Source: RMDB library OK1LIB, as collected in RNAgym. The record gives the reactivity of an RNA of 177 nucleotides to DMS and 2A3. The RNA was probed in 150 mM KOAc, 10 mM MgCl2 and 150 mM bicine (pH 8.5) at 24 C.
[RMDB]
RNA sequence: GGGAACGACUCGAGUAGAGUCGAAAACGACAGCUCAAACGAAGCUAGUAUGGAGUGCGAGUUACUCCCAGCUUCGUUUGUUAGACGCAACACAUUCAUGCGUCCACUGUCACAUAUGAAUGUGUACGAUCAUGGUGUAUUUCGAUAUGUCAUGAUCAAAAGAAACAACAACAACAAC
Reactivity to DMS in 0.01 (KOAc 150mM, MgCl2 10mM, bicine 150mM(pH8.5), 24C), signal-to-noise 9, nucleotides 027 to 126: c140g000a050c050a040g010c300u030c010a000a000a000c000g000a010a010g010c000u000a070g060u040a100u030g020g000a000g020u000g010c080g020a180g020u040u010a010c000u000c000c000c070a040g000c000u010u000c000g010u000u010u000g000u020u020a070g010a040c050g020c040a110a110c040a020c010a010u000u000c010a030u000g010c030g000u000c040c120a110c040u000g000u010c080a080c150a070u010a040u010g000a010a000u000g000u000g010u020a130c170
Reactivity to 2A3 in 0.01 (KOAc 150mM, MgCl2 10mM, bicine 150mM(pH8.5), 24C), signal-to-noise 9, nucleotides 027 to 126: c050g030a010c010a010g010c030u010c060a000a000a000c000g000a000a000g000c020u050a050g060u110a270u160g010g000a010g000u030g030c150g120a130g090u190u090a010c000u000c000c000c000a000g000c000u000u000c000g000u000u000u000g000u000u040a040g010a000c010g010c040a030a040c010a010c000a040u010u020c010a010u030g010c010g010u020c020c040a120c040u070g010u090c020a010c020a080u230a050u050g010a020a000u010g010u010g030u050a050c100